[RMDB]
RNA sequence: GGGAACGACUCGAGUAGAGUCGAAAAAAGCGCCCGAGAGGGAGCCAAUGCCAAAGAGGUGGGGAUCGUCGGAAGGUAUCGUCCCAAUGACCAAGAGAAGGGAAGAAACGGAAGCCUUUCCCCUUGAAAGGGUGCGAGUUCGCUCGCACCAAAAGAAACAACAACAACAAC
Reactivity to 2A3 in 0.01 (KOAc 150mM, MgCl2 10mM, bicine 150mM(pH8.5), 24C), signal-to-noise 1, nucleotides 027 to 129: a000a000g100c030g040c000c010c000g030a030g000a000g010g030g020a000g000c010c000a110a060u130g000c010c000a050a050a000g040a020g030g030u080g070g010g050g030a000u000c040g080u020c000g000g040a010a010g030g010u130a030u090c030g060u020c060c010c000a010a030u120g020a090c010c020a060a010g030a000g030a060a010g050g030g000a000a020g010a000a030a000c050g050g040a070a000g020c000c000u000u010u030c000c000c000c040u020u110g050a100a010a010g070
Source information
The record gives the reactivity of an RNA of 170 nucleotides to 2A3. Source: RMDB library 15KLIB, as collected in RNAgym. Conditions: 150 mM KOAc, 10 mM MgCl2 and 150 mM bicine (pH 8.5), 24 C.